The record gives the reactivity of an RNA of 177 nucleotides to DMS and 2A3. The 2A3 profile rests on 4,480 reads. For DMS the reverse transcriptase was MarathonRT. The data come from the RNA Mapping Database (RMDB), library TTRDEL. The RNA was probed in 150 mM KOAc, 10 mM MgCl2 and 150 mM bicine (pH 8.5) at 24 C. 2A3 adducts were read by reverse transcription with SuperScript II with manganese.

RNA sequence: GGGAACGACUCGAGUAGAGUCGAAAAGAUAUGGAGACUCCAAUGAUGCCACGUAACAUCACUCGGAAACGAGUGUGGUGGUUGAGGAGCUCCUAAGUCAAAAUCCCCUUUCUUCGGAAAGGGGAAAUCAUCACUGAUUGUUCGCAAUCAGUGAUGAAAAAGAAACAACAACAACAAC
Reactivity to DMS in 0.01 (KOAc 150mM, MgCl2 10mM, bicine 150mM(pH8.5), 24C), signal-to-noise 4, nucleotides 027 to 126: g000a050u010a300u000g000g000a050g000a170c010u000c000c010a160a190u010g010a150u000g000c000c000a010c010g020u010a050a120c150a060u020c000a010c000u000c000g000g000a070a070a180c000g010a010g010u000g010u000g020g000u000g010g020u000u010g000a090g000g000a010g000c010u000c000c010u000a000a070g030u000c020a120a090a160a110u010c000c000c000c000u000u000u000c000u000u010c210g000g010a000a020a010g000g000g010g000a000a000a030
Reactivity to 2A3 in 0.01 (KOAc 150mM, MgCl2 10mM, bicine 150mM(pH8.5), 24C), signal-to-noise 3, nucleotides 027 to 126: g010a010u100a030u160g040g030a030g120a300c000u010c020c020a070a300u230g060a030u120g030c020c010a010c030g090u200a180a030c030a200u290c000a020c000u010c000g010g020a070a100a070c030g000a000g010u020g010u010g030g000u010g010g020u010u010g030a020g000g010a010g000c010u000c000c000u010a120a020g030u010c020a000a000a070a300u030c000c000c000c020u000u010u010c010u020u110c250g160g000a020a000a020g000g000g000g000a000a000a060